[RMDB]
RNA sequence: GGGAACGACUCGAGUAGAGUCGAAAAAGCCAUCCUCAACUGUUCGCUGCAUAUCCUGACCUGCAGCGUAUCCCGGUGGCAGUGAUGCCAGAAGGCGGCACUGCGCUGGCUCGCCUGCGCCGUCUCGUACAGGUGACAUAUUCGUAUGUCACCUGUAAAAAGAAACAACAACAACAAC
Reactivity to 2A3 in 0.01 (KOAc 150mM, MgCl2 10mM, bicine 150mM(pH8.5), 24C), signal-to-noise 4, nucleotides 027 to 126: a010g040c050c000a070u050c020c010u110c030a100a120c060u120g070u180u060c020g000c020u020g000c040a010u090a110u260c030c030u050g050a110c030c010u010g010c000a010g000c010g000u010a020u040c020c020c000g070g050u020g080g020c000a010g020u040g020a050u120g020c030c020a070g090a190a070g120g020c000g040g020c040a020c080u100g010c010g000c040u040g070g010c030u040c040g010c020c040u030g000c020g010c010c010g060u010c050u030c050g030
Reactivity to DMS in 0.01 (KOAc 150mM, MgCl2 10mM, bicine 150mM(pH8.5), 24C), signal-to-noise 5, nucleotides 027 to 126: a090g010c040c020a060u010c020c030u000c070a090a100c110u010g010u000u010c010g030c010u000g010c010a030u000a110u010c060c040u010g000a110c140c130u000g010c010a020g010c010g020u000a040u000c060c030c000g000g020u000g010g000c000a050g010u020g000a100u010g010c000c010a110g010a110a060g020g010c010g010g010c050a040c030u000g010c070g000c020u000g010g000c070u010c090g000c020c040u000g010c060g010c010c020g020u000c020u010c090g000